[RMDB]
RNA sequence: GGGAACGACUCGAGUAGAGUCGAAAAACAUGCACAGUGAGUGAGUGCAUCUACUCAGCAGAUUACGGCGGUAUGGCCUCCAUACAAUAUACGUCAGAUCGAGAGGGCCAAUGCCCGGUCCACUCGCCUAUCCACGACCGUUCGCGGUCGUGGAUAGAAAAGAAACAACAACAACAAC
Reactivity to 2A3 in 0.01 (KOAc 150mM, MgCl2 10mM, bicine 150mM(pH8.5), 24C), signal-to-noise 1, nucleotides 027 to 126: a000c030a000u030g030c020a010c020a010g040u010g040a030g000u070g060a040g040u010g040c010a040u000c010u020a010c000u020c030a070g060c020a030g030a150u130u100a090c090g000g030c050g110g010u020a020u030g000g040c050c000u090c060c000a020u020a070c040a070a060u170a020u030a210c010g040u000c030a000g030a110u100c030g030a000g080a030g060g010g030c000c030a030a060u100g060c030c010c000g010g030u050c030c000a030c000u000c000g000c010
Reactivity to DMS in 0.01 (KOAc 150mM, MgCl2 10mM, bicine 150mM(pH8.5), 24C), signal-to-noise 1, nucleotides 027 to 126: a080c190a100u000g010c050a000c000a070g000u000g000a100g010u010g010a160g010u000g000c020a010u000c100u000a100c010u000c020a120g020c040a160g000a100u010u000a080c160g030g080c000g010g000u000a050u000g000g020c190c080u000c090c010a020u000a050c140a140a010u000a090u000a270c040g030u000c030a080g020a070u030c030g070a140g000a050g000g000g000c000c140a200a020u000g020c010c030c000g000g000u010c050c000a100c010u000c010g000c220